Structure probing data (2A3) for a 207-nucleotide construct. For 2A3, 799 sequencing reads were counted.

[RMDB]
RNA sequence: GGGAACGACUCGAGUAGAGUCGAAAAAUAUUUGCUUUCCAGCUGUUGCACCAGCUGUGUCAUGCUGACAGUGGCCUCCACCUGUCUAACUCCUGCUUCCACCAAUUCAGAACCAAGAUAUUUUUAUACUCAUAUCCUGGUAUAAACCAACUGCUGACACCAGUACGAGUUUCGACUCGUACUGGUGAAAAGAAACAACAACAACAAC
Reactivity to 2A3 in 0.01 (KOAc 150mM, MgCl2 10mM, bicine 150mM(pH8.5), 24C), signal-to-noise 2, nucleotides 027 to 156: a000u210a090u060u090u110g000c000u030u030u020c000c000a000g000c000u040g050u140u230g050c020a050c050c010a040g000c040u070g010u010g040u030c020a050u170g040c050u030g010a000c000a040g060u070g040g070c030c030u030c030c000a030c000c030u020g000u000c030u040a060a010c040u070c010c020u020g030c010u040u000c030c060a130c010c000a040a050u050u090c020a010g060a200a060c030c000a000a000g010a010u030a000u010u060u000u030u020a180u030a120c050u040c090a020u040a010u040c000c020u020g030g020u040a100u170a150a060a010c070c060a040a050c060u110g040c030u020g040a000